RNA sequence: GGGAACGACUCGAGUAGAGUCGAAAAGAGUGCGCGUAAAUGCUUGCUUUUGGCUUAACGUUAAGUAUAAAAAGCUAGUUGGUUAGUGAUUGGUCUUGAUAUAUCUACGCCAAUUAAAUGUAAUUCAAGACCUAAGCAUGUAGGUUACUAAAAAUAACCACUUGCAUAAGUUCGCUUAUGCAAGUGGAAAAGAAACAACAACAACAAC
Reactivity to DMS in 0.01 (KOAc 150mM, MgCl2 10mM, bicine 150mM(pH8.5), 24C), signal-to-noise 2, nucleotides 027 to 156: g010a100g010u010g030c040g040c060g000u000a060a090a080u010g010c020u000u010g040c010u000u000u010u000g000g000c020u000u050a060a130c150g020u010u000a060a110g010u000a080u010a060a040a060a020a020g020c010u010a100g040u000u000g050g020u000u010a160g020u000g000a140u000u000g010g010u020c010u000u000g000a080u010a090u000a050u010c040u000a050c050g030c060c080a050a080u010u000a010a080a110u000g010u010a030a090u000u000c030a070a030g020a020c020c000u000a050a100g050c060a100u000g010u000a090g030g060u000u000a120c070u000a020a000a050a050a080u000a100a210
Reactivity to 2A3 in 0.01 (KOAc 150mM, MgCl2 10mM, bicine 150mM(pH8.5), 24C), signal-to-noise 4, nucleotides 027 to 156: g090a010g000u070g020c050g000c020g080u050a040a040a100u160g010c000u000u020g000c000u030u030u020u040g030g000c020u020u040a060a030c030g120u090u100a050a040g020u050a100u160a230a120a010a020a000g000c000u010a010g010u020u070g080g020u030u070a030g010u030g040a060u050u120g000g000u010c000u000u010g010a010u020a010u000a050u130c030u050a030c040g040c040c020a040a030u050u120a130a140a060u130g030u050a010a050u070u010c000a010a000g000a020c000c000u010a050a030g030c010a010u060g040u040a040g010g070u020u030a030c040u060a030a050a070a060a050u050a050a040